The record gives the reactivity of an RNA of 177 nucleotides to DMS.
Conditions: 150 mM KOAc, 10 mM MgCl2 and 150 mM bicine (pH 8.5), 24 C.
For DMS the reverse transcriptase was MarathonRT.

RNA sequence: GGGAACGACUCGAGUAGAGUCGAAAAAUGGCCAGCCAAGGAAAAUAGCCAGGUUCUUAACUGGCCUGAACGAUUAUUGAAGCUUUCUUGUCCUAGGUUUACACUUAAUGGGGGACUGUACCCUCUGACACUGUACGCUUUUCGAAGCGUACAGUGUAAAAGAAACAACAACAACAAC
Reactivity to DMS in 0.01 (KOAc 150mM, MgCl2 10mM, bicine 150mM(pH8.5), 24C), signal-to-noise 2, nucleotides 027 to 126: a070u010g000g000c020c010a000g030c040c040a070a150g020g010a010a040a060a060u010a140g020c050c050a080g010g010u010u000c040u000u020a110a210c040u000g010g000c000c030u000g010a110a080c080g000a040u000u000a090u010u010g010a090a110g000c070u010u000u000c040u000u000g000u010c000c020u000a080g020g010u000u000u020a090c100a040c090u010u000a070a050u010g010g010g000g000g010a120c150u010g020u000a130c020c000c010u000c040u000g010